The data come from the RNA Mapping Database (RMDB), library OK2TST. Structure probing data (DMS) for a 177-nucleotide construct. For DMS, 922 sequencing reads were counted. For DMS the reverse transcriptase was MarathonRT. In probing experiments dimethyl sulfate is read out at A N1 and C N3, which are open when not base-paired.
[RMDB]
RNA sequence: GGGAACGACUCGAGUAGAGUCGAAAAGACACGAGGCAAGCCAUAGACCGUGACGACGCGAUAGACCCUACCCCCGCACACCGCGUAGCUCCUGCGAAGCUCGCAACGCCCCGGGUCGAUGAGCGGGAAGUUGAUGAGUCUUCGGACUCAUCAACUUAAAAGAAACAACAACAACAAC
Reactivity to DMS in 0.01 (KOAc 150mM, MgCl2 10mM, bicine 150mM(pH8.5), 24C), signal-to-noise 1, nucleotides 027 to 126: g010a080c010a060c060g010a060g000g010c050a150a130g050c150c050a150u010a060g000a060c070c060g010u010g030a080c090g000a060c040g010c060g010a160u000a160g000a050c040c000c010u000a210c060c020c010c010c000g020c030a060c040a140c090c030g000c020g030u010a080g020c050u000c030c050u020g010c060g000a110a060g030c050u000c040g010c020a050a090c160g010c030c000c040c000g010g010g000u000c030g000a090u000g000a090g000c020g000g000g000